Source information: An RNA of 177 nucleotides, treated with DMS and 2A3 and read out base by base. For 2A3, 2,184 sequencing reads were counted. For DMS, 1,133 sequencing reads were counted. The data come from the RNA Mapping Database (RMDB), library TTRDES. Conditions: 150 mM KOAc, 10 mM MgCl2 and 150 mM bicine (pH 8.5), 24 C.
RNA sequence: GGGAACGACUCGAGUAGAGUCGAAAAGAUAUGGAGAGUUCCACUUGUCAGUGCGUGAGCUCGGAAACGAGCUACGCACUUGGAUUUAGUGGAGACUCUCCUAAGUCAAACGGGCGUUCGCGCCCGAGGACAAUACACUCUUCGGAGUGUAUUGUCCAAAAGAAACAACAACAACAAC
Reactivity to DMS in 0.01 (KOAc 150mM, MgCl2 10mM, bicine 150mM(pH8.5), 24C), signal-to-noise 1, nucleotides 027 to 126: g010a030u000a300u000g010g010a010g020a040g000u000u000c000c000a000c000u010u000g010u020c000a020g040u000g000c000g020u000g000a000g060c000u020c000g000g000a100a140a280c010g020a000g020c010u010a010c000g020c000a000c000u000u000g020g000a010u020u010u000a000g030u000g000g020a050g000a010c010u010c000u000c000c010u000a000a020g010u000c020a070a150a300c040g010g000g000c030g000u000u020c300g000c030g020c000c000c000g000a020
Reactivity to 2A3 in 0.01 (KOAc 150mM, MgCl2 10mM, bicine 150mM(pH8.5), 24C), signal-to-noise 1, nucleotides 027 to 126: g040a010u090a040u190g000g000a000g000a000g000u030u060c020c000a000c000u000u000g000u030c050a000g000u000g020c030g040u120g300a030g000c020u020c000g010g000a080a110a050c050g000a000g000c000u000a000c000g010c000a000c000u000u110g020g000a010u200u130u220a020g000u010g000g000a090g040a010c000u040c000u000c000c000u010a020a000g070u020c000a040a070a130c020g000g010g010c020g000u060u090c300g020c020g000c080c000c000g000a010